[RMDB]
RNA sequence: GGGAACGACUCGAGUAGAGUCGAAAAGAUAUGGAUACCUCGUAUCUCUAGCGUGACCGAAGAACUCGGAAACGAGGGAGGUUCGGGUACGAGGGUAUCCUAAGUCAAACUUGCCUUCGGGCAAGAAUCAUUGUUUAUUCUUCGGAAUAAACAAUGAAAAAGAAACAACAACAACAAC
Reactivity to 2A3 in 0.01 (KOAc 150mM, MgCl2 10mM, bicine 150mM(pH8.5), 24C), signal-to-noise 6, nucleotides 027 to 126: g010a020u070a040u150g010g000a000u000a020c000c000u000c000g000u010a020u020c120u020c150u200a090g140c030g300u240g050a000c010c010g110a270a050g010a060a030c010u000c010g010g010a100a040a040c000g010a010g020g020g020a020g010g020u040u050c040g020g010g000u010a010c010g000a050g060g020g010u000a000u000c000c000u010a090a010g010u020c030a040a080a150c000u010u000g010c000c000u050u050c290g050g000g000c010a000a000g010a010a050
Reactivity to DMS in 0.01 (KOAc 150mM, MgCl2 10mM, bicine 150mM(pH8.5), 24C), signal-to-noise 8, nucleotides 027 to 126: g010a060u010a300u010g010g000a010u000a020c000c000u000c000g010u010a000u000c010u000c140u000a120g050c160g010u010g010a040c000c000g000a100a150g000a130a240c010u000c000g010g000a090a100a160c000g010a030g000g000g010a060g010g010u000u000c070g000g000g000u000a000c000g000a030g000g010g020u000a000u000c000c000u010a020a110g000u000c030a100a100a190c000u000u000g000c000c000u000u010c190g010g000g000c000a000a000g000a110a130